Structure probing data (DMS) for a 177-nucleotide construct. DMS adducts were read by reverse transcription with MarathonRT.
[RMDB]
RNA sequence: GGGAACGACUCGAGUAGAGUCGAAAAGGUUUGGCGGGGUGAUGGCGAUCAUCAACAACAUUACCAUGCUGGCGAUUGUGUUGACCGGAUCGGCACUGAUCCGCGAGCGUGAACACGGCACGGUGGAGGUUAUCCAAUCGUUCGCGAUUGGAUAACCAAAAGAAACAACAACAACAAC
Reactivity to DMS in 0.01 (KOAc 150mM, MgCl2 10mM, bicine 150mM(pH8.5), 24C), signal-to-noise 1, nucleotides 027 to 126: g040g000u000u000u000g030g040c070g010g010g010g030u000g010a050u000g040g030c070g000a100u000c020a150u000c080a040a070c100a110a080c110a090u020u000a090c060c010a070u000g000c070u040g020g000c050g020a070u030u000g010u000g000u010u000g020a050c300c080g020g000a120u000c010g050g040c110a060c120u020g020a030u000c020c010g020c020g020a090g010c040g020u010g020a060a080c050a060c040g020g010c020a020c060g000g040u020g000g010a230